[RMDB]
RNA sequence: GGGAACGACUCGAGUAGAGUCGAAAAGACCAGUUCGCUCCCGACGACCCGUCUAUCGAAGGUACUCAACACGAUUCGGCAGCGGACGUGUGACGGGAACGAGACGUUCAGCCACGGGGAUGUUGGGCACUACUGCUACGAGUACGAAGCGACGACGCAGCACUUCAAUGUUCGCAUUGAAGUGCUGAAAAGAAACAACAACAACAAC
Reactivity to DMS in 0.01 (KOAc 150mM, MgCl2 10mM, bicine 150mM(pH8.5), 24C), signal-to-noise 2, nucleotides 027 to 156: g000a180c010c020a150g010u020u000c030g030c030u000c010c000c000g020a060c110g060a200c000c010c010g030u000c060u010a170u000c040g000a150a040g030g040u000a120c070u000c050a130a030c010a040c020g000a230u000u000c030g000g000c120a080g000c020g030g010a060c050g000u000g030u000g000a230c070g020g010g000a040a070c000g000a120g020a170c080g040u000u000c000a120g010c060c060a080c030g010g020g000g010a210u040g020u000u000g050g000g000c060a070c010u010a030c000u000g010c040u000a020c070g000a090g010u000a040c040g040a120a050g010c000g010a070c000g020a150c090g000
Reactivity to 2A3 in 0.01 (KOAc 150mM, MgCl2 10mM, bicine 150mM(pH8.5), 24C), signal-to-noise 1, nucleotides 027 to 156: g050a020c010c030a030g050u100u060c020g000c020u000c010c000c000g000a010c000g040a030c000c000c000g060u040c090u090a130u070c070g060a080a040g140g040u190a190c050u080c070a070a000c020a030c060g270a300u030u040c020g070g000c070a060g270c020g030g010a030c030g020u010g030u030g090a090c070g020g040g040a050a050c030g010a020g010a060c100g050u060u040c050a030g040c020c030a010c030g010g000g000g000a080u170g030u020u020g010g020g000c040a050c040u100a020c010u020g080c040u120a090c060g020a020g000u040a030c070g060a090a010g000c010g050a020c030g000a020c070g000